[RMDB]
RNA sequence: GGGAACGACUCGAGUAGAGUCGAAAACAUACGCUGCUCUCUUUUAUGGCACUCUGCCUUUUUAGGAGAGAACCUUGAGUUUGGAGAACUUAGGUAUUCUCUGACUGACACAGCACCAACUACAGUGAUCCGGUAGACGAUUCGUCGUCUACCGGAUAAAAGAAACAACAACAACAAC
Reactivity to 2A3 in 0.01 (KOAc 150mM, MgCl2 10mM, bicine 150mM(pH8.5), 24C), signal-to-noise 2, nucleotides 027 to 126: c020a030u200a100c120g000c030u030g010c000u000c000u020c000u000u050u010u060a070u070g000g000c010a040c140u230c140u110g020c010c000u060u130u020u040u110a030g010g000a020g000a000g000a000a050c010c010u050u130g030a010g000u050u190u200g040g020a010g000a030a030c040u110u080a190g160g050u120a140u060u020c010u030c030u010g010a030c000u020g000a020c030a000c010a100g050c000a030c040c000a070a120c030u240a070c050a090g100u080g180
Reactivity to DMS in 0.01 (KOAc 150mM, MgCl2 10mM, bicine 150mM(pH8.5), 24C), signal-to-noise 2, nucleotides 027 to 126: c090a090u030a120c120g020c010u000g010c000u000c020u000c000u030u000u010u000a060u010g000g010c010a250c140u010c230u010g000c010c040u000u010u000u000u000a050g000g000a020g010a010g020a050a070c120c060u000u030g010a000g020u000u010u040g000g000a140g000a040a020c050u000u000a060g020g000u020a210u010u020c020u000c010u000g000a050c070u000g000a130c100a120c130a020g000c050a100c140c120a050a080c130u000a070c150a080g040u000g010